The record gives the reactivity of an RNA of 177 nucleotides to DMS. Reactivities are given for positions 27 through 126. DMS (dimethyl sulfate) methylates the pairing face of unpaired adenines and cytosines. For DMS, 834 sequencing reads were counted.
RNA sequence: GGGAACGACUCGAGUAGAGUCGAAAAAGCGUUCCCUCUCGAUGAAGCAGAAGAUGUUACUGAAUCUGUGCAAGAAGAAGCACAACCAGUAGAAGUACCUGUUGAAGAUAUUGCGCAGGUUGUCAUAUCUCAGGAUACAGUUCGCUGUAUCCUGAGAAAAAGAAACAACAACAACAAC
Reactivity to DMS in 0.01 (KOAc 150mM, MgCl2 10mM, bicine 150mM(pH8.5), 24C), signal-to-noise 2, nucleotides 027 to 126: a070g010c080g000u000u000c000c000c000u010c080u020c110g000a080u020g010a180a130g000c020a030g000a090a120g010a120u000g010u000u020a020c090u000g010a110a010u000c120u000g010u010g010c000a110a100g010a090a070g020a070a110g010c070a050c040a070a100c060c010a020g050u000a010g040a120a070g010u010a060c060c050u020g000u000u010g020a090a160g020a080u000a100u000u000g000c130g010c040a030g040g020u000u010g000u010c110a120u000a090